This 207-nucleotide RNA was probed chemically with 2A3. The RNA was probed in 150 mM KOAc, 10 mM MgCl2 and 150 mM bicine (pH 8.5) at 24 C. 2A3 adducts were read by reverse transcription with SuperScript II with manganese. It was measured as part of the RMDB library OK3TST. The 2A3 profile rests on 381 reads.
RNA sequence: GGGAACGACUCGAGUAGAGUCGAAAACUUUACAGGCGCCUGCUAGUAGCUUAUCGCGAUGCUCAGCAGAGGCACCCGGGAGAAGAUGCGCUUUCCGAAACCGUACGCGACCUUCUUGCUAGAAAAUUCGAGAGCACGCUAGCUGCCCUCUGCGUCCUGAAAGUUGCACAUUCGUGUGCAACUUUCAAAAAGAAACAACAACAACAAC
Reactivity to 2A3 in 0.01 (KOAc 150mM, MgCl2 10mM, bicine 150mM(pH8.5), 24C), signal-to-noise 1, nucleotides 027 to 156: c010u060u110u160a110c070a020g050g000c080g060c020c060u040g000c020u020a010g000u110a030g020c000u090u080a280u220c060g000c000g100a100u020g000c000u010c040a040g000c000a000g000a020g020g010c020a050c010c030c050g060g060g000a130g020a060a000g010a050u090g100c020g010c070u120u050u000c030c020g040a070a070a090c010c020g030u080a050c120g120c010g130a190c000c000u160u090c000u040u160g050c000u030a120g140a000a230a120a050u130u060c060g010a020g000a010g040c020a010c220g000c060u010a000g020c010u010g020c000c000c000u070c010u000g050c010g060u060c020c000